[RMDB]
RNA sequence: GGGAACGACUCGAGUAGAGUCGAAAACAUGCUGAGCAAAAUAAAGAAGAGAGUUUAGAGAAGCUAUCUCAGCUUUAUAUCAUUGUUGAUGAACAUAAUAAUGAUUUUGAAUUGACAGAUCGUGGCAAUACUCCGAAUUGUUCGCAAUUCGGAGUAUAAAAGAAACAACAACAACAAC
Reactivity to 2A3 in 0.01 (KOAc 150mM, MgCl2 10mM, bicine 150mM(pH8.5), 24C), signal-to-noise 1, nucleotides 027 to 126: c040a010u090g040c020u040g020a040g100c050a000a040a080a130u100a060a070a010g010a110a000g040a000g000a010g010u010u100u170a180g030a000g070a130a020g030c010u030a030u110c020u000c000a030g020c000u010u070u020a060u000a000u020c020a000u030u030g050u010u010g050a110u060g040a120a020c050a070u220a100a000u030a030a010u070g040a010u000u110u060u100g170a050a130u040u050g060a100c090a000g040a110u060c030g020u030g030g000c010a000
Reactivity to DMS in 0.01 (KOAc 150mM, MgCl2 10mM, bicine 150mM(pH8.5), 24C), signal-to-noise 2, nucleotides 027 to 126: c050a050u010g010c020u000g000a180g020c060a060a010a150a060u000a000a020a040g000a080a030g010a060g010a030g010u000u000u000a120g010a280g000a100a060g000c010u000a050u030c020u000c020a060g000c000u000u000u000a010u010a030u010c010a000u000u000g020u000u000g010a070u000g010a100a130c240a080u010a020a010u000a000a010u000g000a030u000u000u000u010g010a100a130u010u000g000a050c030a020g000a040u010c060g000u010g000g000c150a080